[RMDB]
RNA sequence: GGGAACGACUCGAGUAGAGUCGAAAACAGAAGCUUUCUUGCAGCGCCGGCGCCUUAGCAGGGCGCCAGGCUAAUGAGGGUCACUCAAAGAGGCUGAUCAAAUAUUCAAAUUUCCCGGCACGCCGGGACGUGAACAGCAGUUCGCUGCUGUUCACGUAAAAGAAACAACAACAACAAC
Reactivity to 2A3 in 0.01 (KOAc 150mM, MgCl2 10mM, bicine 150mM(pH8.5), 24C), signal-to-noise 3, nucleotides 027 to 126: c010a000g050a040a000g060c050u250u300u070c010u060u130g060c070a050g080c050g000c050c010g000g000c000g000c000c020u110u030a000g070c110a080g040g020g020c000g000c000c000a020g000g000c000u000a000a170u040g030a080g030g030g100u240c060a080c130u060c030a000a010a000g010a000g100g000c010u020g010a040u100c060a040a060a030u220a160u150u170c090a080a070a010u110u050u000c000c000c000g000g070c070a070c120g070c000c000g000g000g010
Reactivity to DMS in 0.01 (KOAc 150mM, MgCl2 10mM, bicine 150mM(pH8.5), 24C), signal-to-noise 2, nucleotides 027 to 126: c120a100g000a150a030g020c010u000u050u010c010u000u000g000c180a060g010c120g000c050c000g000g000c000g000c000c010u000u040a110g050c300a120g000g010g060c010g000c000c000a000g000g000c010u000a030a160u020g040a000g030g070g010u050c180a020c010u010c020a050a050a020g000a070g030g000c020u000g020a300u020c160a010a030a090u060a120u020u000c170a020a020a120u010u000u020c030c000c010g060g000c080a030c300g010c020c000g010g000g000

Chemical mapping of a 177-nucleotide RNA with 2A3 and DMS. The reactions ran in a buffer of 150 mM KOAc, 10 mM MgCl2 and 150 mM bicine (pH 8.5), at 24 C. It was measured as part of the RMDB library RFM100. Reactivities are given for positions 27 through 126. For DMS, 1,740 sequencing reads were counted.